Description
This 207-nucleotide RNA was probed chemically with 2A3 and DMS. DMS adducts were read by reverse transcription with MarathonRT. Values cover nucleotides 27 to 156.
[RMDB]
RNA sequence: GGGAACGACUCGAGUAGAGUCGAAAAGUAGAAUCUGUCAAGCAAAACCCCAAAACCUUACACUGAGAGCAUUUAGCCUGAUUACUCUUUAAAUCAAAUCAGGCAAUAGAGAGAAAUUCGAGAGGUGAAACGGGAGUAAUGUUCGCAUUACUCCCAACUUACACAUGAACUUCGGUUCAUGUGUAAGAAAAGAAACAACAACAACAAC
Reactivity to 2A3 in 0.01 (KOAc 150mM, MgCl2 10mM, bicine 150mM(pH8.5), 24C), signal-to-noise 4, nucleotides 027 to 156: g060u090a030g040a100a080u040c070u120g080u070c080a050a020g040c030a040a050a090a180c020c020c000c010a030a080a050a080c040c050u100u130a050c100a050c120u140g060a010g000a000g050c010a020u030u030u050a000g000c000c000u000g000a010u000u040a040c010u020c040u140u300u110a040a040a030u160c080a010a000a030u000c000a010g020g010c000a000a000u010a000g030a000g000a000g010a030a100a010u080u070c040g010a040g000a010g190g000u050g030a090a090a030c090g000g000g000a000g010u010a000a000u010g020u040u040c160g000c080a000u000u010a000c010u000c000c000c000a000a000
Reactivity to DMS in 0.01 (KOAc 150mM, MgCl2 10mM, bicine 150mM(pH8.5), 24C), signal-to-noise 2, nucleotides 027 to 156: g020u020a090g000a210a060u030c030u010g000u000c050a040a110g060c030a060a100a110a200c070c000c000c000a060a030a090a150c060c010u010u000a060c080a140c100u010g000a060g000a070g010c010a300u000u000u000a060g010c000c010u000g000a030u010u000a060c070u000c030u000u000u000a020a020a020u000c120a030a100a050u000c000a020g020g010c010a060a030u000a060g000a070g000a090g000a060a060a130u010u000c040g010a090g010a030g010g000u000g030a050a050a110c070g030g020g010a030g020u000a000a020u000g000u000u010c300g000c030a010u000u000a010c020u000c010c020c000a000a000
Source: RMDB library M2RFPK, as collected in RNAgym. The DMS profile rests on 3,115 reads.